[RMDB]
RNA sequence: GGGAACGACUCGAGUAGAGUCGAAAACGUCCCCGUCGUACAGAAUGGUAACAUAUCUCUCCAAAUAUCUGAGCUUGGGUAUACGGAGAAACCCAACCCCUUGGGAAGAUUGGGUAUAUGGCUAAAUUACAUCGAUUGUACUUCGGUACAAUCGAAACCUUCUGCUUGAGUUCGCUCAAGCAGAAGGAAAAGAAACAACAACAACAAC
Reactivity to 2A3 in 0.01 (KOAc 150mM, MgCl2 10mM, bicine 150mM(pH8.5), 24C), signal-to-noise 2, nucleotides 027 to 156: c040g120u070c040c000c000c010g140u110c060g050u100a060c040a080g170a110a110u100g020g040u110a230a000c020a040u090a060u060c050u000c000u000c050c000a070a160a050u060a040u020c020u080g040a030g210c090u180u190g040g000g010u000a010u010a050c020g030g000a000g020a070a010a000c020c000c000a000a020c000c000c000c050u090u160g050g000g000a050a010g070a100u030u030g020g000g000u020a020u000a010u090g020g000c020u070a030a140a080u230u090a050c080a090u010c010g000a020u000u000g000u000a010c000u050u050c170g060g010u010a000c000a000a000u000c000g000a000a000a000